An RNA of 177 nucleotides, treated with DMS and 2A3 and read out base by base. Source: RMDB library TTRDES, as collected in RNAgym. The 2A3 profile rests on 14,355 reads. Reactivities are given for positions 27 through 126. The DMS profile rests on 7,473 reads.

[RMDB]
RNA sequence: GGGAACGACUCGAGUAGAGUCGAAAAGAUAUGGACGGAUAACUUCGAUAAGUCGCAUUCGGAAACGAAUGGCGACUUUUGACGAAGGAAGCCGUCCUAAGUCAAACUGGAUCGUUCGCGAUCCAGACGUAAGUGGUAUGUUCGCAUACCACUUACGAAAAGAAACAACAACAACAAC
Reactivity to DMS in 0.01 (KOAc 150mM, MgCl2 10mM, bicine 150mM(pH8.5), 24C), signal-to-noise 6, nucleotides 027 to 126: g000a040u010a300u000g020g000a020c000g000g000a000u010a200a290c000u000u000c000g020a210u000a020a010g000u000c000g020c010a040u000u000c010g000g000a140a090a180c000g000a010a000u000g030g030c000g000a010c000u000u000u000u010g010a190c130g010a040a000g000g000a120a210g000c000c010g000u000c000c000u000a000a130g000u000c040a080a120a230c010u010g000g000a010u000c000g010u000u020c230g020c020g000a010u000c000c000a000g000a090
Reactivity to 2A3 in 0.01 (KOAc 150mM, MgCl2 10mM, bicine 150mM(pH8.5), 24C), signal-to-noise 5, nucleotides 027 to 126: g020a020u090a040u190g000g010a000c000g000g000a020u060a300a200c050u010u000c010g060a080u030a130a010g010u000c010g010c020a000u000u010c000g020g000a080a090a050c020g010a010a010u070g300g040c000g000a010c000u010u000u020u040g050a030c000g000a000a010g040g010a050a070g050c010c000g000u000c000c000u000a010a000g010u000c040a050a020a100c000u000g000g000a000u010c010g040u130u120c300g000c010g180a010u000c000c010a000g010a010